[RMDB]
RNA sequence: GGGAACGACUCGAGUAGAGUCGAAAAGAAUGUCUUCUCUUCCCCCGCGAUUCUUCCUCGAUUCGGAUCGGCUCAUCUCGACAAGAGGCGGCGGUCCUCAGUGCUCUUACUCUUUUCUGUAAAGAGGAAACUGCUGGACUCGCCGCCCAAGUUCGAGCACAUUUCGAAUCUUCGGAUUCGAAAUGUGAAAAGAAACAACAACAACAAC
Reactivity to 2A3 in 0.01 (KOAc 150mM, MgCl2 10mM, bicine 150mM(pH8.5), 24C), signal-to-noise 1, nucleotides 027 to 156: g070a060a070u210g040u150c110u200u020c010u030c090u150u220c020c000c010c000c010g020c000g010a010u020u040c000u050u030c030c000u050c050g010a020u010u020c010g000g160a170u020c040g040g150c040u030c050a150u030c040u010c000g000a010c010a040a110g110a200g070g000c000g010g030c000g080g020u000c000c000u010c000a000g000u050g050c010u030c000u120u080a090c000u060c090u080u200u300u170c100u110g180u050a040a100a040g000a000g000g050a020a220a020c000u010g050c070u030g000g000a030c060u070c110g000c010c030g000c000c010c000a010a010g000u020u060c000g000a020g000